Structure probing data (2A3) for a 207-nucleotide construct.
The reactions ran in a buffer of 150 mM KOAc, 10 mM MgCl2 and 150 mM bicine (pH 8.5), at 24 C.

RNA sequence: GGGAACGACUCGAGUAGAGUCGAAAACAAUCAACAAUAUGGUUUGUGUAGUUAUGCUGAAAAUCGUUGAGGUUGUAUGGAAUAGGUUAACCGUAAGAACUUAAGUUGAAAAACUUUAAAAUUAAUCAAAAUCAUGUACACUUCGGUGUACAUGAAACCGUCGUAUAAUCUUCGGAUUAUACGACGGAAAAGAAACAACAACAACAAC
Reactivity to 2A3 in 0.01 (KOAc 150mM, MgCl2 10mM, bicine 150mM(pH8.5), 24C), signal-to-noise 2, nucleotides 027 to 156: c030a000a110u090c020a020a040c030a070a120u080a040u130g020g010u010u000u010g020u040g000u070a100g030u070u050a040u200g050c030u060g030a060a000a000a040u070c040g010u030u050g010a020g040g010u010u040g040u030a140u080g020g070a140a160u030a100g040g000u030u040a050a030c030c000g030u060a080a050g020a080a000c000u080u040a030a030g000u010u010g020a040a070a070a000a000c050u130u090u230a030a150a130a170u140u150a100a070u060c040a020a170a030a130u000c000a000u000g000u010a000c000a000c010u030u030c150g070g000u010g000u030a000c000a000u000g010a000a000a000
Annotation:
For 2A3, 720 sequencing reads were counted. The data come from the RNA Mapping Database (RMDB), library M2RFPK.